[RMDB]
RNA sequence: GGGAACGACUCGAGUAGAGUCGAAAAUCUGUGCUGUCACCAUGUUCUUGAUUUUGAGCGGCCUUAUUUCACAUGUAUCCUAAAGAUGGUUGGGUGCAGGGAGACACUGUGUGCCUUGUCCACACAGCGUAACUUAGGGUUUCGACCCUAAGUUACGAAAAGAAACAACAACAACAAC
Reactivity to 2A3 in 0.01 (KOAc 150mM, MgCl2 10mM, bicine 150mM(pH8.5), 24C), signal-to-noise 8, nucleotides 027 to 126: u060c030u020g080u050g050c020u030g060u090c030a040c030c020a060u090g060u120u060c060u100u160g140a250u120u080u050u170g060a050g020c020g010g040c010c020u080u110a130u050u160u080c090a120c040a090u050g050u060a090u100c010c020u100a120a110a040g120a090u130g090g000u090u060g050g010g000u030g000c010a020g020g050g020a060g010a020c050a010c030u000g010u000g000u010g030c010c050u080u110g040u020c030c000a010c000a000c000a020g030
Reactivity to DMS in 0.01 (KOAc 150mM, MgCl2 10mM, bicine 150mM(pH8.5), 24C), signal-to-noise 5, nucleotides 027 to 126: u010c030u010g010u030g000c020u010g000u020c030a080c040c030a050u020g000u010u010c070u010u010g010a110u010u010u020u030g010a080g010c050g000g000c020c030u000u010a050u020u000u010c040a050c090a060u020g000u010a090u020c010c010u010a050a070a080g000a100u020g010g020u010u040g010g000g010u000g010c050a050g010g010g000a130g000a110c120a120c020u000g020u000g020u010g020c100c100u010u030g020u020c160c010a010c020a010c020a020g030

The data come from the RNA Mapping Database (RMDB), library OK1LIB. An RNA of 177 nucleotides, treated with 2A3 and DMS and read out base by base. Reactivities are given for positions 27 through 126. For DMS the reverse transcriptase was MarathonRT. The DMS profile rests on 11,277 reads.